[RMDB]
RNA sequence: GGGAACGACUCGAGUAGAGUCGAAAAGCAGUUGGCACAUUGUCAAGAAGGUAUAUGCGCCACGACCACUAACCACACCGGCUGUACUUGUUGAUAACGCGGCCAUCACGGACUACUGUCAAGCUGAGGCUGUAUGAAAUUUCGAUUUCAUACAGCCAAAAGAAACAACAACAACAAC
Reactivity to 2A3 in 0.01 (KOAc 150mM, MgCl2 10mM, bicine 150mM(pH8.5), 24C), signal-to-noise 6, nucleotides 027 to 126: g070c060a030g010u070u050g010g000c030a040c050a080u090u100g040u070c020a070a070g110a080a050g180g010u060a140u020a010u270g050c040g020c010c000a010c020g050a020c000c020a010c050u080a080a050c010c010a060c000a030c040c020g060g000c010u030g030u090a050c030u090u130g070u100u090g100a110u070a170a010c030g000c000g090g000c020c010a010u040c010a000c040g020g010a010c020u070a020c040u080g050u090c040a040a020g000c010u020g030a030
Reactivity to DMS in 0.01 (KOAc 150mM, MgCl2 10mM, bicine 150mM(pH8.5), 24C), signal-to-noise 3, nucleotides 027 to 126: g030c090a040g010u000u010g000g000c060a090c100a050u050u000g030u010c020a110a050g000a120a100g020g000u000a070u040a010u020g000c070g000c040c020a020c040g010a090c020c030a080c020u020a090a100c050c050a060c040a060c060c030g010g020c040u010g000u000a090c090u000u000g010u010u010g000a090u030a040a080c100g010c040g000g020c050c010a060u010c030a040c090g000g000a030c050u010a080c050u010g000u000c070a060a070g030c030u010g020a280
The data come from the RNA Mapping Database (RMDB), library OK1LIB. An RNA of 177 nucleotides, treated with 2A3 and DMS and read out base by base. For 2A3, 4,234 sequencing reads were counted.